[RMDB]
RNA sequence: GGGAACGACUCGAGUAGAGUCGAAAACAAGACGCUGAGGAAGCCUUUGGAAGGGGAAAGAGGAGGGCGGACAAUCAGGGGGUGGGCCUCCCGAUUCGAGGGGCCCGACGCCAGAAAUCGGAAGGCACACCAUACCAUAGUUCGCUAUGGUAUGGUGAAAAGAAACAACAACAACAAC
Reactivity to 2A3 in 0.01 (KOAc 150mM, MgCl2 10mM, bicine 150mM(pH8.5), 24C), signal-to-noise 3, nucleotides 027 to 126: c010a000a030g130a020c060g020c110u060g010a010g080g050a070a020g020c000c010u040u070u110g070g050a070a060g000g010g000g020a040a130a040g030a050g050g000a080g030g000g010c100g030g060a040c060a060a090u130c050a040g010g000g000g040g000u070g010g020g000c010c000u050c020c000c000g050a110u170u170c030g020a060g020g000g010g000c000c010c030g020a020c020g000c010c000a040g080a030a100a020u090c010g020g010a020a030g040g020c010a010
Reactivity to DMS in 0.01 (KOAc 150mM, MgCl2 10mM, bicine 150mM(pH8.5), 24C), signal-to-noise 3, nucleotides 027 to 126: c060a090a110g020a110c160g000c080u020g000a110g010g010a130a100g000c020c040u010u010u000g020g010a130a080g010g000g010g000a050a020a050g010a100g000g000a120g020g010g020c060g010g010a130c110a070a070u010c090a070g000g010g010g010g030u010g000g010g000c010c000u000c000c000c010g000a170u000u010c030g020a160g000g000g010g010c020c010c040g010a060c050g000c010c030a100g010a040a070a050u010c070g010g000a050a030g010g010c040a200